[RMDB]
RNA sequence: GGGAACGACUCGAGUAGAGUCGAAAAGUGGUUUCGACCACCUUAGCGGGGUCUCGUCUCACAGCAUGGGACAUGCUCUGAAGCCUCCACGGAGCAACAGCCCAUGAACUACUGUGUUGACGAGACGGAGGCACCCUAUUCCGAGUUUCGACUCGAAUCAUAGAUAGAGAUUCGUCUCUAUCUAUGAAAAAGAAACAACAACAACAAC
Reactivity to 2A3 in 0.01 (KOAc 150mM, MgCl2 10mM, bicine 150mM(pH8.5), 24C), signal-to-noise 8, nucleotides 027 to 156: g020u020g040g050u050u110u210c220g110a040c020c010a020c010c030u130u140a070g050c110g050g060g020g000u000c000u000c000g010u000c000u010c000a000c000a000g040c010a040u020g000g000g030a120c090a150u120g000c010u000c000u020g060a130a040g030c010c000u000c000c000a030c020g010g010a000g020c010a010a050c060a070g110c010c000c000a010u020g040a040a030c100u300a040c010u160g000u000g030u100u150g020a000c000g000a000g000a000c000g000g010a000g000g000c000a050c000c020c000u040a140u110u060c110c030g020a030g020u080u130u090c100g110a040c020u010c050g030a030a080
Reactivity to DMS in 0.01 (KOAc 150mM, MgCl2 10mM, bicine 150mM(pH8.5), 24C), signal-to-noise 3, nucleotides 027 to 156: g020u010g000g000u000u000u000c200g030a070c000c020a010c020c030u000u000a100g010c090g000g000g010g020u000c000u020c030g020u000c010u000c010a030c000a020g000c010a300u000g020g030g030a020c030a300u000g020c010u000c000u010g010a050a090g020c020c000u000c010c030a300c040g020g010a020g010c010a020a060c070a180g030c000c010c000a190u000g010a090a170c010u000a120c010u000g000u000g010u000u000g000a060c030g010a040g020a000c020g010g000a020g050g060c020a070c010c010c000u000a140u000u000c010c010g010a060g000u010u000u000c060g030a150c000u000c000g000a070a170
Chemical mapping of a 207-nucleotide RNA with 2A3 and DMS. High DMS reactivity at an A or C suggests that its Watson-Crick edge is free. 2A3 adducts were read by reverse transcription with SuperScript II with manganese. Source: RMDB library RNAMAK, as collected in RNAgym. Values cover nucleotides 27 to 156. For DMS the reverse transcriptase was MarathonRT.